[RMDB]
RNA sequence: GGGAACGACUCGAGUAGAGUCGAAAACAGAAAGCGGGCUAAGGAAAAUCAAGAAAAGCGCUCGCCAGCGACGUCAUCAAUUUAAGAGCGUCAUCAAACGUGGGAUUGUCAUUUUCCAGCUGAGUGGUGGGUACUGAGGAUUCGUCCUCAGUACCCAAAAAGAAACAACAACAACAAC
Reactivity to DMS in 0.01 (KOAc 150mM, MgCl2 10mM, bicine 150mM(pH8.5), 24C), signal-to-noise 1, nucleotides 027 to 126: c100a100g000a070a110a210g000c000g000g000g040c000u000a110a070g000g080a090a170a000a140u010c200a100a000g000a010a040a010a120g000c070g000c000u000c000g060c000c010a000g000c110g000a040c010g030u000c210a110u000c110a090a150u030u000u010a050a030g000a000g010c000g000u000c000a100u060c130a040a050a060c100g000u000g030g000g000a130u000u060g050u060c150a070u000u030u000u060c100c000a080g000c000u010g000a030g070u020g000g000
Reactivity to 2A3 in 0.01 (KOAc 150mM, MgCl2 10mM, bicine 150mM(pH8.5), 24C), signal-to-noise 2, nucleotides 027 to 126: c040a000g130a000a040a010g080c060g000g090g000c000u250a120a130g060g040a110a040a060a060u200c030a150a050g090a060a260a050a000g040c050g000c040u000c000g050c030c000a000g090c030g000a030c000g060u000c020a160u050c130a020a300u230u110u300a140a110g020a000g010c000g030u000c020a100u110c070a020a080a170c000g000u150g000g010g000a080u010u180g050u020c050a070u030u030u000u010c000c000a000g000c000u090g100a100g180u120g020g020
The data come from the RNA Mapping Database (RMDB), library OK1LIB.
The record gives the reactivity of an RNA of 177 nucleotides to DMS and 2A3.
The RNA was probed in 150 mM KOAc, 10 mM MgCl2 and 150 mM bicine (pH 8.5) at 24 C.
High 2A3 reactivity points to a flexible backbone, as in loops and unpaired stretches.
For 2A3 the reverse transcriptase was SuperScript II with manganese.